[RMDB]
RNA sequence: GGGAACGACUCGAGUAGAGUCGAAAAUUCGAGCGGUUUUUUCGUACCGGGUUGGUAGAAACAACCGGACAAUUUAGCGCUAUGGGAGUGCCCCAGCCCAAGCUUUCUGCUUACCUCACUGCCACGGCUUUAAUGUACCGUUCGCGGUACAUUAAAGAAAAGAAACAACAACAACAAC
Reactivity to DMS in 0.01 (KOAc 150mM, MgCl2 10mM, bicine 150mM(pH8.5), 24C), signal-to-noise 4, nucleotides 027 to 126: u010u000c060g010a130g020c010g000g000u000u000u000u000u000u010c060g010u000a060c010c010g020g020g020u010u000g030g010u000a090g000a090a060a040c050a020a030c000c000g010g010a130c110a040a040u000u000u000a050g000c060g020c030u000a070u010g010g000g000a070g030u000g010c070c010c010c060a120g000c020c020c020a060a090g000c040u000u010u000c070u010g010c040u000u000a100c070c040u000c040a050c050u000g000c030c020a040c090g000g020
Reactivity to 2A3 in 0.01 (KOAc 150mM, MgCl2 10mM, bicine 150mM(pH8.5), 24C), signal-to-noise 2, nucleotides 027 to 126: u050u030c050g020a010g050c020g070g000u060u010u000u010u000u180c070g020u030a180c010c030g070g080g110u130u180g020g000u080a050g110a040a100a010c010a010a020c030c000g030g020a020c020a010a020u110u110u110a050g040c000g000c040u060a110u110g040g000g020a050g050u070g040c000c000c000c030a020g010c020c020c000a030a010g020c020u040u160u050c060u050g020c000u020u050a080c000c020u010c020a050c030u040g000c010c010a010c030g020g020
An RNA of 177 nucleotides, treated with DMS and 2A3 and read out base by base. As a SHAPE reagent, 2A3 marks flexible, mostly unpaired nucleotides at the ribose 2'-OH. DMS adducts were read by reverse transcription with MarathonRT. The DMS profile rests on 6,390 reads.